[RMDB]
RNA sequence: GGGAACGACUCGAGUAGAGUCGAAAAGAUAUGGACAAGAGCGAUAAGCUGGUAUCGGAAACGAUACCCAGCUUUUGACGCUCGGGGUCCUAAGUCAAAGCCGCAUACUGUUCGCAGUAUGCGGCAAGGUGCAAUGGCAGUUCGCUGCCAUUGCACCAAAAGAAACAACAACAACAAC
Reactivity to DMS in 0.01 (KOAc 150mM, MgCl2 10mM, bicine 150mM(pH8.5), 24C), signal-to-noise 1, nucleotides 027 to 126: g020a000u010a110u010g000g000a020c000a200a050g010a000g010c000g050a130u000a070a000g010c000u000g000g000u000a000u000c000g010g010a050a050a060c010g000a020u000a010c160c100c100a000g010c000u000u000u000u000g000a270c040g000c010u000c000g050g000g050g000u020c000c000u000a070a130g000u000c020a070a140a160g000c000c000g000c000a010u000a000c010u010g010u000u020c160g020c000a020g000u000a000u000g060c000g000g030c010a000a000
The data come from the RNA Mapping Database (RMDB), library TTRDEL. Structure probing data (DMS) for a 177-nucleotide construct. For DMS the reverse transcriptase was MarathonRT. The DMS profile rests on 904 reads. Conditions: 150 mM KOAc, 10 mM MgCl2 and 150 mM bicine (pH 8.5), 24 C.